[RMDB]
RNA sequence: GGGAACGACUCGAGUAGAGUCGAAAAAUGCAGUCGGCCUACAUGGCAGGGCGCUACGCGGCCGCCUACGAAGCCAGGGAAACCCACCCUUACUGGAUGUAUGUGGCGGUGAUGGAUGGCGUUACCCGGGCCAGCCAUGCCGCCCUGCAUGGGAAAGAUCUGUCAUUACUUUCGAGUAAUGACAGAUAAAAGAAACAACAACAACAAC
Reactivity to DMS in 0.01 (KOAc 150mM, MgCl2 10mM, bicine 150mM(pH8.5), 24C), signal-to-noise 2, nucleotides 027 to 156: a040u000g040c070a090g050u010c080g030g030c030c010u000a080c040a030u000g010g050c020a150g030g040g020c090g000c060u000a070c160g020c080g030g000c000c010g000c000c010u010a110c080g000a150a080g030c030c000a100g020g040g000a040a100a190c020c020c050a190c050c010c010u000u000a060c050u010g020g010a090u000g000u000a040u010g040u000g030g000c020g020g060u020g000a090u020g000g020a040u000g010g010c010g010u000u000a120c070c070c050g030g000g000c000c030a050g000c000c010a040u010g030c040c020g000c030c000c000u000g000c010a020u010g010g000g000a050a120a240g000
Reactivity to 2A3 in 0.01 (KOAc 150mM, MgCl2 10mM, bicine 150mM(pH8.5), 24C), signal-to-noise 3, nucleotides 027 to 156: a000u100g000c040a010g040u060c030g040g020c000c020u110a100c050a110u090g120g000c100a160g050g040g000c020g000c040u120a080c190g040c070g070g050c010c020g010c020c010u040a060c090g060a100a010g010c020c020a020g020g000g020a080a130a090c000c000c000a010c010c000c000u020u040a060c050u080g100g090a050u060g020u120a100u160g100u130g020g040c030g030g020u070g120a040u030g000g030a020u020g010g030c060g120u140u080a100c040c040c000g040g030g010c010c000a010g000c000c000a000u010g020c020c020g000c010c020c000u010g000c000a050u050g000g010g050a080a150a030g140